[RMDB]
RNA sequence: GGGAACGACUCGAGUAGAGUCGAAAAGGAACUCGCCGGCAAGCUUACCGGGCUGGCGGUGCGGGUGCCGGUGAUCAACGUGUCGCUGGUCGAUCUCACCGUGCAGGUGGCCCGGGAUACCAGCGUACUAAAUAUUACCCUUCGGGGUAAUAUUUAGAAAAGAAACAACAACAACAAC
Reactivity to DMS in 0.01 (KOAc 150mM, MgCl2 10mM, bicine 150mM(pH8.5), 24C), signal-to-noise 7, nucleotides 027 to 126: g010g000a120a130c100u000c020g030c010c020g000g000c030a070a090g010c090u000u000a120c030c030g010g010g010c010u000g010g020c020g010g010u000g020c120g000g000g010u000g000c010c010g010g020u000g000a020u000c090a090a120c250g010u010g010u000c010g020c000u000g010g010u000c140g010a080u000c030u000c020a040c010c010g020u000g010c150a120g010g020u010g000g000c020c010c010g000g000g010a070u010a050c030c010a040g010c020g020u010a160
Reactivity to 2A3 in 0.01 (KOAc 150mM, MgCl2 10mM, bicine 150mM(pH8.5), 24C), signal-to-noise 4, nucleotides 027 to 126: g050g010a040a050c020u000c030g030c010c000g010g000c020a020a060g060c020u080u060a050c020c000g020g010g000c020u040g060g040c030g000g000u010g010c050g020g030g030u060g010c000c010g000g010u010g000a010u050c050a080a200c090g130u170g040u170c010g000c000u020g000g030u060c080g080a080u030c020u000c020a020c010c020g020u070g080c080a060g120g120u110g080g000c020c000c010g010g000g010a020u060a020c000c010a000g040c000g010u010a010
The record gives the reactivity of an RNA of 177 nucleotides to DMS and 2A3. DMS adducts were read by reverse transcription with MarathonRT. It was measured as part of the RMDB library OK2TST.